An RNA of 177 nucleotides, treated with DMS and 2A3 and read out base by base. Reactivities are given for positions 27 through 126. Conditions: 150 mM KOAc, 10 mM MgCl2 and 150 mM bicine (pH 8.5), 24 C. The data come from the RNA Mapping Database (RMDB), libraries RFM100 and RFMREP.
RNA sequence: GGGAACGACUCGAGUAGAGUCGAAAAUGGGUUUGCCGUAGCCCUGCCCAUUCCUGUAGAACUUGCCAGAUCAGCACUGAGACGGUUUGAGGCCUCCUGUUGUCCCUCCAGCAGAAGGUUAUAGAACAAACUGUGUCCAGUUCGCUGGACACAGUUUAAAAGAAACAACAACAACAAC
Reactivity to DMS in 0.01 (KOAc 150mM, MgCl2 10mM, bicine 150mM(pH8.5), 24C), signal-to-noise 3, nucleotides 027 to 126: u030g000g000g020u000u000u010g030c070c020g010u000a120g000c000c020c010u000g010c040c010c010a150u000u000c030c010u010g010u010a060g010a060a100c090u010u060g000c050c010a030g000a150u030c060a060g000c080a040c020u020g000a100g000a080c060g010g000u000u020u010g020a220g000g010c010c020u000c030c030u040g000u000u000g000u030c000c010c010u010c300c000a020g000c040a020g000a100a050g000g010u000u030a070u000a140g000a100a100c110
Reactivity to 2A3 in 0.01 (KOAc 150mM, MgCl2 10mM, bicine 150mM(pH8.5), 24C), signal-to-noise 3, nucleotides 027 to 126: u060g000g000g030u040u040u140g040c030c030g050u050a010g000c030c000c000u050g000c040c000c010a000u030u060c030c000u050g100u150a080g030a120a040c030u070u050g010c000c000a030g000a220u100c010a000g060c030a010c060u060g030a040g020a050c050g060g040u050u040u100g080a030g030g000c000c000u000c000c000u020g010u030u010g040u080c000c000c000u070c040c000a000g010c000a020g020a000a010g020g030u070u060a220u080a050g050a070a000c020